Structure probing data (DMS and 2A3) for a 170-nucleotide construct. For 2A3 the reverse transcriptase was SuperScript II with manganese.
RNA sequence: GGGAACGACUCGAGUAGAGUCGAAAAGACCGCUGGACUCGCCGCCCCAGCCCGGGUAAGCCACAGUUCCGACCGAAGGGGACGAGUGGGGAGAAGGGCGCCCCGAGGGGGGUCAUCUGGCAAAGAGACACACAGAGCUUCGGCUCUGUGAAAAGAAACAACAACAACAAC
Reactivity to DMS in 0.01 (KOAc 150mM, MgCl2 10mM, bicine 150mM(pH8.5), 24C), signal-to-noise 6, nucleotides 027 to 129: g010a130c050c100g050c020u000g020g020a050c070u040c080g030c060c000g040c040c010c000c030a050g040c090c000c010g030g000g000u030a050a130g020c050c020a000c060a110g000u040u020c010c030g060a170c080c060g070a070a070g000g000g000g000a040c000g010a180g030u040g020g010g020g040a090g010a220a100g000g000g000c170g020c110c020c010c070g020a240g020g020g030g040g000g080u030c120a050u000c020u040g020g040c070a100a120a100g030a090g050a140c200a110
Reactivity to 2A3 in 0.01 (KOAc 150mM, MgCl2 10mM, bicine 150mM(pH8.5), 24C), signal-to-noise 4, nucleotides 027 to 129: g040a040c000c020g000c040u020g040g000a050c010u030c100g010c020c010g210c020c000c010c010a040g000c010c000c000g040g000g030u060a050a010g040c000c010a010c000a010g010u060u020c000c020g030a090c030c040g050a120a050g010g000g000g010a010c000g010a040g020u040g000g010g020g000a130g070a030a050g020g010g000c030g030c000c010c010c020g070a140g020g020g010g000g010g000u010c020a020u020c020u060g020g000c000a030a080a000g060a020g010a010c050a000

The data come from the RNA Mapping Database (RMDB), library 15KLIB. High DMS reactivity at an A or C suggests that its Watson-Crick edge is free. Conditions: 150 mM KOAc, 10 mM MgCl2 and 150 mM bicine (pH 8.5), 24 C. The DMS profile rests on 9,607 reads.